[RMDB]
RNA sequence: GGGAACGACUCGAGUAGAGUCGAAAAUCGGCAACAUACCGUCAACGUGUCAUUGGCUUGUGUGUCAUUGAGAUCCCCGGCCAGGCGCAUUAACCGAUCUGCACGUAUGGCUUCGUCCUACGUCGCGCGUGCUUGGGGAGUUCGCUCCCCAAGCACGAAAAGAAACAACAACAACAAC
Reactivity to DMS in 0.01 (KOAc 150mM, MgCl2 10mM, bicine 150mM(pH8.5), 24C), signal-to-noise 1, nucleotides 027 to 126: u000c040g030g070c080a000a160c090a030u010a240c060c200g050u000c030a000a050c000g000u000g020u040c300a090u000u000g020g000c110u000u020g000u020g000u000g000u000c000a100u000u070g000a140g010a040u000c030c000c000c200g000g000c010c080a100g000g000c030g130c070a060u000u030a030a060c040c120g000a010u020c020u030g000c090a020c000g000u040a030u070g030g000c000u030u000c250g000u000c000c010u000a010c040g070u000c180g000c000g000
Reactivity to 2A3 in 0.01 (KOAc 150mM, MgCl2 10mM, bicine 150mM(pH8.5), 24C), signal-to-noise 4, nucleotides 027 to 126: u080c000g020g030c010a050a020c030a110u180a080c050c020g060u060c040a030a020c040g040u030g070u110c020a070u000u140g000g000c050u150u120g020u030g000u000g000u090c040a100u050u130g030a040g000a170u040c030c000c000c000g010g010c000c000a000g020g000c010g000c010a010u110u130a040a040c020c010g000a040u020c040u050g000c000a000c030g010u030a090u250g010g000c010u140u050c080g120u060c010c000u000a010c010g020u020c100g000c000g000